[RMDB]
RNA sequence: GGGAACGACUCGAGUAGAGUCGAAAACACCAUGGGGUACCUUCAAGCUCUGGUGCUCUCUCUUCGCCUUGCUGACCUUGAUGGAGUGGAUAGGCCUUGGGUUCAACAUGAAUUGACCCAGGCCAUGGAAGUUCGACUAGUUCGCUAGUCGAACUUCAAAAGAAACAACAACAACAAC
Reactivity to 2A3 in 0.01 (KOAc 150mM, MgCl2 10mM, bicine 150mM(pH8.5), 24C), signal-to-noise 1, nucleotides 027 to 126: c070a000c010c010a040u150g000g020g050g000u010a040c010c000u020u050c090a090a030g050c010u020c050u140g000g000u040g040c020u000c000u000c000u000c000u040u040c020g030c000c000u060u050g030c040u030g050a050c050c000u060u000g020a030u100g040g040a050g090u060g050g130a120u050a170g000g040c020c000u100u240g030g000g000u140u300c000a000a000c000a120u270g110a250a190u090u010g000a000c020c020c000a000g000g000c020c000a000u010g020
Reactivity to DMS in 0.01 (KOAc 150mM, MgCl2 10mM, bicine 150mM(pH8.5), 24C), signal-to-noise 1, nucleotides 027 to 126: c110a100c050c000a050u000g040g010g000g040u020a050c110c080u000u010c100a100a130g000c020u000c020u000g030g000u000g010c050u000c090u000c040u000c030u000u000c090g020c050c010u000u000g020c090u010g010a070c090c020u020u000g010a050u000g040g000a080g030u000g000g010a070u000a100g000g000c030c000u000u020g030g010g000u000u010c010a020a020c150a180u020g020a120a250u000u000g000a040c000c000c000a010g000g000c000c020a030u000g000